Chemical mapping of a 177-nucleotide RNA with DMS and 2A3. For 2A3, 736 sequencing reads were counted. The RNA was probed in 150 mM KOAc, 10 mM MgCl2 and 150 mM bicine (pH 8.5) at 24 C. It was measured as part of the RMDB library OK1LIB.
RNA sequence: GGGAACGACUCGAGUAGAGUCGAAAAGGCUAGACGAAUCGACGCGCCAACUUUCUCGGAUCGAAGAAGCUAUACGCUUUACCCCCAUGAGUGUGUACAAGGUGAUCGACAUCAUCGGGACCAGCCCCGUGCGGUCUUACUUCGGUAAGACCGCACGAAAAGAAACAACAACAACAAC
Reactivity to DMS in 0.01 (KOAc 150mM, MgCl2 10mM, bicine 150mM(pH8.5), 24C), signal-to-noise 1, nucleotides 027 to 126: g000g000c000u000a070g000a020c000g000a070a170u000c000g000a020c090g160c000g010c010c050a120a040c070u040u100u000c000u000c000g010g000a020u040c000g000a120a140g000a080a110g000c000u000a130u000a130c140g000c010u000u000u000a180c040c000c000c040c120a060u050g070a070g000u000g000u050g000u040a000c220a260a100g000g000u000g000a140u020c070g000a030c000a180u000c130a010u000c030g010g040g000a150c200c000a240g000c170c000c120
Reactivity to 2A3 in 0.01 (KOAc 150mM, MgCl2 10mM, bicine 150mM(pH8.5), 24C), signal-to-noise 2, nucleotides 027 to 126: g000g090c090u060a010g000a070c040g050a060a110u130c010g020a010c050g010c000g000c030c040a000a040c010u000u170u070c040u020c000g040g000a110u050c020g010a100a080g000a010a000g120c010u010a050u060a280c070g000c000u060u020u100a190c000c000c000c000c000a000u040g000a000g100u080g010u060g000u150a040c030a110a140g020g010u090g000a030u080c100g020a000c010a040u090c020a020u020c020g000g000g000a050c000c000a000g000c010c010c000